[RMDB]
RNA sequence: GGGAACGACUCGAGUAGAGUCGAAAAACAUUUAGGCCAACCUGUCUUUGCCUCUGUGAAGGACGCGAUUAAGGAGACUGGAGCCACUGCCAGUGCCAUCUUUGUUCCUCCACCGAUCGCAGCUGCAACGACGGGUGGCAUUCGUGCCACCCGUCGUAAAAGAAACAACAACAACAAC
Reactivity to 2A3 in 0.01 (KOAc 150mM, MgCl2 10mM, bicine 150mM(pH8.5), 24C), signal-to-noise 1, nucleotides 027 to 126: a000c080a090u150u150u110a180g000g000c000c000a040a040c020c000u020g000u000c070u010u070u120g000c000c000u040c020u040g050u090g060a080a030g050g000a130c100g010c110g080a080u110u030a040a090g060g050a070g000a010c050u020g000g050a000g080c000c000a020c000u130g010c040c040a050g000u000g120c030c000a070u100c160u130u060u160g050u070u100c000c000u000c000c080a120c050c000g030a050u010c060g000c090a030g090c000u010g070c030a020